[RMDB]
RNA sequence: GGGAACGACUCGAGUAGAGUCGAAAAGCUCUGAUUCACGUGCCAGAGCAGAAAACACGUGAAAAGCUGAUGUCGAUAAGAUAUCAGCAGUGAGCCAGACAUACGAUACGUAUGUCUGGCUCACGAAAUCAUGGAUAAUGUUCGCAUUAUCCAUGAUAAAAGAAACAACAACAACAAC
Reactivity to 2A3 in 0.01 (KOAc 150mM, MgCl2 10mM, bicine 150mM(pH8.5), 24C), signal-to-noise 7, nucleotides 027 to 126: g040c000u000c010u040g050a110u050u010c000a000c000g000u010g050c050c010a060g010a070g160c060a000g100a070a080a010a010c020a000c000g000u000g000a020a030a030a080g010c000u010g000a010u000g010u010c010g050a130u090a300a110g000a000u010a020u010c000a000g000c000a000g000u000g000a000g000c000c000a000g000a010c000a000u010a000c000g300a240u100a300c210g000u000a000u000g000u000c000u000g000g000c000u000c000a000c000g000a000a000
Reactivity to DMS in 0.01 (KOAc 150mM, MgCl2 10mM, bicine 150mM(pH8.5), 24C), signal-to-noise 3, nucleotides 027 to 126: g000c020u000c010u020g000a180u010u000c000a000c020g010u000g000c130c050a040g000a080g010c160a110g010a090a060a060a120c010a020c000g000u010g000a010a120a080a120g000c010u030g000a000u000g000u000c000g000a150u030a050a080g000a000u000a000u000c000a000g020c000a010g000u000g000a050g020c040c030a040g050a070c000a030u010a000c140g010a180u060a070c300g100u000a010u020g050u000c010u040g010g120c010u000c000a000c000g000a090a120
An RNA of 177 nucleotides, treated with 2A3 and DMS and read out base by base.
It was measured as part of the RMDB library OK1LIB.